[RMDB]
The record gives the reactivity of an RNA of 177 nucleotides to 2A3 and DMS. For 2A3 the reverse transcriptase was SuperScript II with manganese. DMS adducts were read by reverse transcription with MarathonRT.
RNA sequence: GGGAACGACUCGAGUAGAGUCGAAAAGGUCAAGGUGGGUUUGAAGGCACUUGAUUUUCUCAAUGUCUCUAUUCCAUGUCCAAAUCUGGAAGCCCAGCGGCGCCCAGCACGAACCUUGCGGUGGUCAUACUAAAUCGUUAUUCGUAACGAUUUAGUAAAAAGAAACAACAACAACAAC
Reactivity to 2A3 in 0.01 (KOAc 150mM, MgCl2 10mM, bicine 150mM(pH8.5), 24C), signal-to-noise 9, nucleotides 027 to 126: g040g010u080c030a020a040g070g080u040g020g050g020u060u090u140g160a090a040g030g000c020a030c090u010u010g010a030u100u050u170u050c080u010c000a010a040u050g010u000c000u000c010u050a100u070u000c010c010a030u100g080u010c050c060a060a050a110u060c040u020g020g010a040a020g010c010c000c010a020g040c040g030g000c010g020c000c000c010a010g020c030a020c050g040a050a040c010c000u020u040g010c040g020g030u050g010g020u050c020a020
Reactivity to DMS in 0.01 (KOAc 150mM, MgCl2 10mM, bicine 150mM(pH8.5), 24C), signal-to-noise 9, nucleotides 027 to 126: g010g010u020c030a060a060g000g020u010g010g000g000u000u010u010g010a110a060g000g010c010a030c190u000u000g000a030u010u010u020u020c160u000c010a040a040u010g000u000c010u000c020u000a110u010u000c010c020a040u010g010u010c080c170a050a090a110u020c080u000g000g000a060a130g010c020c010c030a110g010c100g010g010c050g010c090c010c020a110g010c070a080c100g000a060a100c040c020u000u010g010c070g010g010u000g000g000u000c080a150
Source information:
Reactivities are given for positions 27 through 126. It was measured as part of the RMDB libraries RFM100 and RFMREP. The reactions ran in a buffer of 150 mM KOAc, 10 mM MgCl2 and 150 mM bicine (pH 8.5), at 24 C.